Structure probing data (2A3 and DMS) for a 177-nucleotide construct. The DMS profile rests on 8,802 reads. DMS adducts were read by reverse transcription with MarathonRT. For 2A3 the reverse transcriptase was SuperScript II with manganese. The RNA was probed in 150 mM KOAc, 10 mM MgCl2 and 150 mM bicine (pH 8.5) at 24 C. The 2A3 profile rests on 7,450 reads.
RNA sequence: GGGAACGACUCGAGUAGAGUCGAAAAGGGUUUGGAUUACAUCAAUAGUCACAUCAGCAGAAGUAAACAGAACAAGAAGUACUGCGGUUAUUCAAGUUCAAAGUUCACACUAUCGCAAUAAAUUGAAAUCGUAUUUAGUAUUCGUACUAAAUACGAUAAAAGAAACAACAACAACAAC
Reactivity to 2A3 in 0.01 (KOAc 150mM, MgCl2 10mM, bicine 150mM(pH8.5), 24C), signal-to-noise 6, nucleotides 027 to 126: g040g000g010u080u080u080g060g010a070u060u080a030c020a050u060c020a030a100u040a070g050u040c020a010c010a120u060c030a040g030c010a010g020a150a010g060u100a040a060a020c010a030g020a030a020c020a040a030g060a050a010g040u040a010c020u030g040c020g060g010u020u030a050u080u050c030a040a000g010u000u000c010a100a030a030g030u050u060c040a040c000a010c080u050a070u180c020g000c060a040a090u130a170a120a080u130u110g070a180a130
Reactivity to DMS in 0.01 (KOAc 150mM, MgCl2 10mM, bicine 150mM(pH8.5), 24C), signal-to-noise 7, nucleotides 027 to 126: g010g000g000u000u000u010g010g010a090u000u000a070c090a080u000c070a050a090u000a080g010u000c050a050c070a060u000c060a060g020c030a070g000a080a080g010u010a050a050a050c080a100g010a040a040c040a040a230g000a060a050g010u000a050c050u000g020c110g020g010u000u000a110u000u000c050a020a240g000u000u000c040a040a070a110g010u000u000c040a040c080a070c060u000a060u000c070g010c060a050a060u010a020a050a130u010u010g010a060a090